[RMDB]
This 177-nucleotide RNA was probed chemically with 2A3 and DMS. Reactivities are rounded to 0.1 and cut off at 0 and 3. DMS adducts were read by reverse transcription with MarathonRT.
RNA sequence: GGGAACGACUCGAGUAGAGUCGAAAAAGCGACGCCUGAUACGUCAGGCGUCGCAAGGGGAGAAAGGGGUCUGCAACCAAAGGUGGUCUGGGUCCGUCCUUUGGAUCCCGACCCCUCUUCUUCCCAAAUUUACUAGCCGAUUCGUCGGCUAGUAAAUAAAAGAAACAACAACAACAAC
Reactivity to 2A3 in 0.01 (KOAc 150mM, MgCl2 10mM, bicine 150mM(pH8.5), 24C), signal-to-noise 2, nucleotides 027 to 126: a000g020c020g000a000c000g000c000c000u000g000a030u010a060c260g070u010c000a000g000g000c000g000u010c000g020c000a000a000g000g000g000g010a000g020a010a010a000g000g020g010g010u000c010u030g040c090a080a090c010c010a000a000a000g010g010u040g000g050u100c140u220g200g070g080u040c000c010g080u120c040c000u010u010u000g020g000a060u040c000c000c010g000a010c000c010c040c000u020c030u010u000c000u000u000c000c000c010a000a000
Reactivity to DMS in 0.01 (KOAc 150mM, MgCl2 10mM, bicine 150mM(pH8.5), 24C), signal-to-noise 2, nucleotides 027 to 126: a060g000c020g030a000c000g080c040c000u040g010a030u020a070c200g000u000c030a000g030g000c020g030u020c030g040c000a000a000g010g010g000g020a000g000a020a060a010g000g000g000g010u000c000u000g010c300a110a150c000c000a010a020a030g010g010u010g010g010u020c200u030g050g000g000u010c010c000g000u030c010c010u020u000u000g000g020a020u030c300c070c110g000a030c000c000c000c000u000c020u000u000c000u000u000c000c000c000a000a000
Record summary:
For 2A3, 2,550 sequencing reads were counted.